The record gives the reactivity of an RNA of 177 nucleotides to 2A3 and DMS. For DMS, 1,886 sequencing reads were counted. DMS adducts were read by reverse transcription with MarathonRT. DMS (dimethyl sulfate) methylates the pairing face of unpaired adenines and cytosines. It was measured as part of the RMDB library OK2TST. The 2A3 profile rests on 1,784 reads.
[RMDB]
RNA sequence: GGGAACGACUCGAGUAGAGUCGAAAAGAGCGGUGACCGGGAGAGCAUGCGAGAACUGAGCUCCAUGAUGGUGCCUCCGGACAAGCUGGUGGACCGCGUCCGGGAGAUCGUGGGAGAGGCGCCGGUCCCAUCGGAUGAUGUUCGCAUCAUCCGAUGGAAAAGAAACAACAACAACAAC
Reactivity to 2A3 in 0.01 (KOAc 150mM, MgCl2 10mM, bicine 150mM(pH8.5), 24C), signal-to-noise 1, nucleotides 027 to 126: g040a010g000c050g030g050u070g030a100c010c000g020g050g040a140g030a010g000c030a020u120g030c020g010a010g040a170a070c110u130g040a070g060c010u000c040c020a030u140g020a060u120g040g070u070g040c000c020u040c000c010g010g000a030c060a140a000g020c070u100g040g040u080g060g010a050c000c030g000c010g000u020c010c000g000g070g000a070g000a050u110c060g040u080g000g050g010a160g020a040g010g040c020g040c020c000g000g000u050c000
Reactivity to DMS in 0.01 (KOAc 150mM, MgCl2 10mM, bicine 150mM(pH8.5), 24C), signal-to-noise 2, nucleotides 027 to 126: g030a130g010c030g010g000u000g020a070c020c030g000g000g000a130g010a140g010c030a050u000g030c170g000a100g020a100a070c160u010g020a110g020c020u000c010c010a060u000g020a100u000g020g030u000g000c030c010u010c010c020g010g010a060c090a090a190g010c070u000g020g010u000g010g010a090c090c030g020c080g000u000c000c010g000g010g010a120g020a080u010c040g020u010g020g000g000a130g010a100g010g000c030g000c030c020g000g030u020c020